[RMDB]
RNA sequence: GGGAACGACUCGAGUAGAGUCGAAAAACAAGCUGCACGUGCGUGCGAGCAGUUUUCGAAAUCGCACGUUUCACGUAAAGACGCAACUCUACUCGAGAAAGCGAGUCACGCUGACAGCGUCAAGGAACCUAAGAACAAACUUCGGUUUGUUCUUAGGAAAAGAAACAACAACAACAAC
Reactivity to 2A3 in 0.01 (KOAc 150mM, MgCl2 10mM, bicine 150mM(pH8.5), 24C), signal-to-noise 5, nucleotides 027 to 126: a010c060a040a030g030c030u050g000c060a010c020g010u020g030c020g000u010g000c000g000a030g080c100a060g000u050u040u150u280c040g070a050a030a060u000c000g000c010a010c000g000u050u100u090c020a010c000g010u040a100a010a010g040a020c040g000c070a010a020c000u000c010u000a000c000u010c000g010a000g000a010a000a000g020c000g010a030g080u090c020a010c110g040c030u050g060a080c060a080g020c020g040u050c050a040a020g070g010a070a020
Reactivity to DMS in 0.01 (KOAc 150mM, MgCl2 10mM, bicine 150mM(pH8.5), 24C), signal-to-noise 6, nucleotides 027 to 126: a080c180a110a100g010c010u000g010c300a020c000g030u000g000c050g000u000g000c010g010a010g020c130a110g010u010u000u000u000c120g010a050a100a080u000c020g010c020a030c020g000u000u000u010c020a030c040g020u000a030a160a040g000a230c070g000c050a080a040c000u000c000u000a000c000u010c000g000a010g000a030a050a120g000c030g000a160g020u010c070a040c020g000c020u000g000a100c140a100g010c020g020u000c070a060a090g010g000a090a150
This 177-nucleotide RNA was probed chemically with 2A3 and DMS. Reactivities are given for positions 27 through 126. 2A3 adducts were read by reverse transcription with SuperScript II with manganese. For 2A3, 9,130 sequencing reads were counted. The data come from the RNA Mapping Database (RMDB), library M2PK90.